[RMDB]
RNA sequence: GGGAACGACUCGAGUAGAGUCGAAAAGGGGUCCUGGAUAAAUCACAUCUACCCACCACACUUUGUCAGCUCUGAAGCCUCCACGGAGCUUGGAUUUAAGUGUGAGGAUGUGGAAUACAGGACGGAGGCACCCAAAAGACAGGGUUCGCCCUGUCAACGUACGUGUGGGAUUCGUCCCACACGUACGAAAAGAAACAACAACAACAAC
Reactivity to 2A3 in 0.01 (KOAc 150mM, MgCl2 10mM, bicine 150mM(pH8.5), 24C), signal-to-noise 1, nucleotides 027 to 156: g100g010g000g000u020c000c010u000g050g000a060u160a170a160a010u110c010a000c000a000u000c010u060a120c020c050c050a000c020c030a030c020a000c010u080u050u200g040u160c090a030g000c000u020c000u010g100a170a030g000c020c010u010c020c000a020c020g020g000a020g000c040u010u060g000g010a070u190u170u270a020a000g000u020g000u000g000a010g030g000a000u000g010u020g040g020a040a040u210a100c020a000g000g030a000c000g000g010a010g010g000c010a050c000c000c000a040a050a010a040g000a010c010a000g030g000g010u130u110c110g010c000c000c060u050g010u040c010a000a000
The record gives the reactivity of an RNA of 207 nucleotides to 2A3. For 2A3 the reverse transcriptase was SuperScript II with manganese. Reactivities are given for positions 27 through 156. The reactions ran in a buffer of 150 mM KOAc, 10 mM MgCl2 and 150 mM bicine (pH 8.5), at 24 C.